[RMDB]
RNA sequence: GGGAACGACUCGAGUAGAGUCGAAAAUCGCCGCUCCGCCCGGAUGCCGCCGGCUCGUCACGGACUCGCGCGUAACCCUCCUCCGCUUCAUCGGUUACGCACAAGCUGUUCGACCCACCAGCCACGGACCUGAGCCUUUUUUCGAAAAGGCUCAGGUAAAAGAAACAACAACAACAAC
Reactivity to DMS in 0.01 (KOAc 150mM, MgCl2 10mM, bicine 150mM(pH8.5), 24C), signal-to-noise 1, nucleotides 027 to 126: u060c060g020c040c000g000c130u000c000c050g000c010c080c070g000g000a100u000g000c070c000g000c040c030g000g000c020u000c030g020u030c030a130c050g000g000a090c050u000c070g000c070g030c020g000u000a040a010c040c000c160u020c020c030u000c020c020g020c050u050u040c100a110u010c120g020g000u020u000a050c020g000c080a020c090a080a110g020c020u000g000u030u000c070g000a070c010c020c030a100c030c070a100g030c040c020a080c050g020g000
Reactivity to 2A3 in 0.01 (KOAc 150mM, MgCl2 10mM, bicine 150mM(pH8.5), 24C), signal-to-noise 2, nucleotides 027 to 126: u080c010g000c000c020g030c030u010c000c030g030c010c000c000g040g010a060u070g030c010c020g000c000c020g000g030c020u010c010g050u030c010a030c040g000g040a060c010u000c080g010c040g000c000g010u010a030a040c010c000c000u020c070c020u070c000c010g030c060u070u090c040a130u070c020g000g060u020u040a030c010g000c010a000c030a040a020g000c020u020g040u090u030c010g020a050c000c000c000a030c010c010a000g020c000c000a070c030g070g000
An RNA of 177 nucleotides, treated with DMS and 2A3 and read out base by base.
The data come from the RNA Mapping Database (RMDB), library RFM100.
DMS adducts were read by reverse transcription with MarathonRT.
Reactivities are given for positions 27 through 126.